[RMDB]
RNA sequence: GGGAACGACUCGAGUAGAGUCGAAAACUUUUGAAUUAGCAUGCAUCUGCGUAGAUUCUGCCUCUGGCUUUACCAGCAACAGAAAAUUUGUAGAACAGAGACAGAAAUGCUUUGCUGUUAAUUGCGCUUAAAUAAGAAUAGGAGUAAACGAGAGUAAGGUGGUAAAUAUGUUCGCAUAUUUACCACCAAAAGAAACAACAACAACAAC
Reactivity to DMS in 0.01 (KOAc 150mM, MgCl2 10mM, bicine 150mM(pH8.5), 24C), signal-to-noise 2, nucleotides 027 to 156: c030u000u010u010u010g000a070a060u000u000a020g040c010a030u000g050c050a090u000c030u010g050c050g010u000a190g010a290u010u010c010u020g000c000c050u030c000u000g020g000c100u010u000u000a030c060c080a050g020c120a050a300c060a110g020a080a060a050a170u010u000u020g010u000a070g000a060a050c010a060g030a160g000a070c030a050g000a060a040a040u010g000c000u010u000u000g020c020u000g040u010u000a060a040u010u010g020c010g000c060u000u000a050a070a130u000a040a200g000a040a190u010a040g020g000a080g010u010a030a110a130c060g010a110g010a120g040u020a160a170
Reactivity to 2A3 in 0.01 (KOAc 150mM, MgCl2 10mM, bicine 150mM(pH8.5), 24C), signal-to-noise 4, nucleotides 027 to 156: c020u120u090u080u230g060a010a000u020u010a010g000c030a010u160g010c010a010u060c080u120g030c020g000u020a060g060a300u040u000c000u000g000c000c020u000c000u000g040g020c030u020u010u010a040c060c040a020g020c030a020a090c040a110g300a110a100a040a070u090u080u060g000u020a000g000a040a000c010a000g000a000g000a000c000a000g000a020a030a000u020g010c000u000u000u020g000c000u000g000u000u010a000a000u010u070g040c040g000c020u060u090a090a080a070u170a130a070g070a020a020u060a170g060g030a030g030u100a060a160a060c060g010a040g000a000g160u080a130a040